[RMDB]
RNA sequence: GGGAACGACUCGAGUAGAGUCGAAAACUUCCCAUUUAUUUGCUGCUUGUAGUCUCACAGUGAUACGAGCAGUUAUACGCAUGGGAUAAAAUAACAUUGGGCCACUGUAAAUUGAGAUGAAGUAACCCGCUAUCCUAUUUUUCGAAAUAGGAUAGCGAAAAGAAACAACAACAACAAC
Reactivity to 2A3 in 0.01 (KOAc 150mM, MgCl2 10mM, bicine 150mM(pH8.5), 24C), signal-to-noise 6, nucleotides 027 to 126: c010u020u020c000c000c000a000u040u090u030a110u010u080u090g000c000u000g000c010u020u020g000u060a160g120u080c010u030c050a130c070a100g090u070g100a020u000a000c000g000a000g000c010a000g000u010u040a040u010a010c090g030c060a020u060g010g020g000a020u120a090a120a020a070u150a090a050c080a120u030u120g050g050g000c030c030a030c040u070g050u140a060a170a170u130u140g080a140g080a150u150g090a120a030g040u040a040a050c020c010
Reactivity to DMS in 0.01 (KOAc 150mM, MgCl2 10mM, bicine 150mM(pH8.5), 24C), signal-to-noise 3, nucleotides 027 to 126: c210u000u000c000c000c000a110u030u000u020a050u010u020u020g000c000u000g000c000u000u010g000u000a040g010u010c000u010c190a140c140a100g010u000g000a130u000a000c010g000a020g000c000a000g000u000u000a060u010a110c190g040c190a040u010g000g010g010a110u010a080a090a110a080u020a130a100c070a170u010u020g000g000g000c070c050a020c020u000g000u010a060a090a140u010u010g010a120g000a120u010g010a090a160g000u000a060a080c140c080
This 177-nucleotide RNA was probed chemically with 2A3 and DMS. Reactivities are given for positions 27 through 126. Values are in units of 0.01, from 0 to 300, in steps of 10. The RNA was probed in 150 mM KOAc, 10 mM MgCl2 and 150 mM bicine (pH 8.5) at 24 C. DMS adducts were read by reverse transcription with MarathonRT.